[RMDB]
Record summary: The record gives the reactivity of an RNA of 177 nucleotides to 2A3 and DMS. Conditions: 150 mM KOAc, 10 mM MgCl2 and 150 mM bicine (pH 8.5), 24 C. It was measured as part of the RMDB libraries RFM100 and RFMREP. Values are in units of 0.01, from 0 to 300, in steps of 10.

RNA sequence: GGGAACGACUCGAGUAGAGUCGAAAAGGUCAUGAUAAUGCAGUUAAGGAUGCAGCAGACUGAUUAAUCCAGACAUCCCGCUACAAGCGUACGCUGGUCAGGCCUGGUCCGGUAAAGGUGCUCUGAACUUUGGUAAUAUUUUCGAAUAUUACCAAAGAAAAGAAACAACAACAACAAC
Reactivity to 2A3 in 0.01 (KOAc 150mM, MgCl2 10mM, bicine 150mM(pH8.5), 24C), signal-to-noise 9, nucleotides 027 to 126: g050g000u030c050a120u070g030a040u070a160a070u190g070c020a020g030u070u100a120a050g080g040a060u060g030c020a030g020c020a010g040a040c010u010g020a050u070u160a050a050u040c030c000a000g040a040c010a050u050c020c010c000g010c010u090a090c070a190a040g020c020g050u040a020c060g010c030u020g000g040u030c030a020g010g010c000c010u030g010g020u020c010c010g000g020u070a080a070a010g060g000u040g020c020u020c020u040g070a080a060
Reactivity to DMS in 0.01 (KOAc 150mM, MgCl2 10mM, bicine 150mM(pH8.5), 24C), signal-to-noise 9, nucleotides 027 to 126: g010g000u000c010a080u010g010a050u010a070a090u020g010c010a070g010u010u020a110a120g010g010a060u000g010c040a070g010c090a110g010a070c030u000g000a110u020u020a080a120u010c040c030a080g010a110c050a070u010c020c020c020g010c070u000a070c160a080a100g010c050g010u010a070c130g010c020u000g010g010u010c040a050g000g000c020c020u000g000g010u010c020c030g000g000u010a040a070a080g010g010u000g000c070u000c010u000g000a110a190